[RMDB]
RNA sequence: GGGAACGACUCGAGUAGAGUCGAAAAACGGUCAUAUACGUAUGACCGAAUGAGCAUAACAGGGCCGCCCCAAAGCGUUCACAUUGUGGCCCCUGUCAGAUUCUGGUAAAUCUGCGAGUUCUGCUAAAUUAGGUAACUCUCUUCGGAGAGUUACCAAGUAAGUAGUUUUCUUCGGAAAACUACUUACAAAAGAAACAACAACAACAAC
Reactivity to 2A3 in 0.01 (KOAc 150mM, MgCl2 10mM, bicine 150mM(pH8.5), 24C), signal-to-noise 3, nucleotides 027 to 156: a000c010g000g000u000c010a000u030a010u010a030c150g070u020a000u010g000a000c010c000g040a000a090u080g000a000g000c030a040u030a110a020c000a030g040g010g000c070c070g000c000c020c000c010a030a090a030g100c060g130u300u280c050a080c090a230u100u070g010u030g000g010c010c000c000c010u010g030u040c000a000g010a030u090u020c030u210g040g070u110a100a100a020u010c000u050g010c010g060a070g040u040u050c060u040g030c030u050a040a150a180u190u190a070g000g000u000a000a000c000u010c000u000c010u050u080c210g020g000a000g010a000g000u000u000a000c000c000a000a010
Reactivity to DMS in 0.01 (KOAc 150mM, MgCl2 10mM, bicine 150mM(pH8.5), 24C), signal-to-noise 1, nucleotides 027 to 156: a090c060g030g020u000c000a000u000a070u000a060c230g070u000a020u010g000a010c040c020g050a010a020u010g000a170g000c050a140u000a050a070c050a060g000g040g020c050c100g000c010c000c020c040a030a050a110g020c060g020u000u000c060a080c050a190u000u000g010u000g030g040c010c020c000c000u000g000u010c020a020g010a040u000u010c060u000g040g030u000a050a010a050u000c010u000g010c030g000a220g000u000u000c090u000g020c030u010a050a100a210u000u000a140g000g020u000a040a010c020u000c010u010c040u000u000c220g010g000a020g000a010g020u000u000a010c000c000a000a090